[RMDB]
RNA sequence: GGGAACGACUCGAGUAGAGUCGAAAAAGUCACCUGUUACGAUAGGUGACAUUUGAACCAGCGAACAAUUCAGUUGCGAGAUUCGAGGUUUCAGUCUGAAUCAUAGUAGCCAUUACGAUGGCUACAACUCACUCCCGACUGUUCGCAGUCGGGAGAACAGGCAUAUUACGUUCGCGUAAUAUGCCUGAAAAGAAACAACAACAACAAC
Reactivity to 2A3 in 0.01 (KOAc 150mM, MgCl2 10mM, bicine 150mM(pH8.5), 24C), signal-to-noise 4, nucleotides 027 to 156: a000g010u000c010a000c000c010u010g020u060u090a100c240g040a030u020a040g010g000u010g000a000c000a000u030u020u120g040a040a020c000c000a020g120c010g000a010a000c010a040a120u020u000c000a010g000u000u000g010c000g000a010g000a000u010u000c000g010a020g040g080u140u240u300c030a030g100u090c010u000g010a000a010u020c040a050u060a090g000u000a000g000c000c000a000u050u060a060c240g140a020u020g000g000c000u000a000c000a000a010c010u070c060a090c020u000c000c000c010g010a010c000u010g040u040u110c260g030c100a000g010u000c000g010g000g000a000g000a000a000
Reactivity to DMS in 0.01 (KOAc 150mM, MgCl2 10mM, bicine 150mM(pH8.5), 24C), signal-to-noise 1, nucleotides 027 to 156: a160g040u000c010a010c010c000u000g010u010u010a300c220g000a020u000a010g000g000u010g040a000c010a000u000u000u010g000a180a160c010c030a190g000c010g000a050a050c060a210a040u000u020c070a070g060u020u000g020c010g000a080g000a080u000u000c010g050a230g000g010u000u010u000c100a090g030u000c070u010g010a050a060u000c100a080u000a220g020u000a010g030c010c000a040u000u000a120c210g000a060u000g050g000c000u000a010c000a020a110c080u000c020a130c030u010c000c000c000g070a010c000u000g000u000u010c300g020c040a050g040u000c000g040g020g000a000g020a000a030
An RNA of 207 nucleotides, treated with 2A3 and DMS and read out base by base. For DMS, 2,075 sequencing reads were counted. It was measured as part of the RMDB library M2RFPK.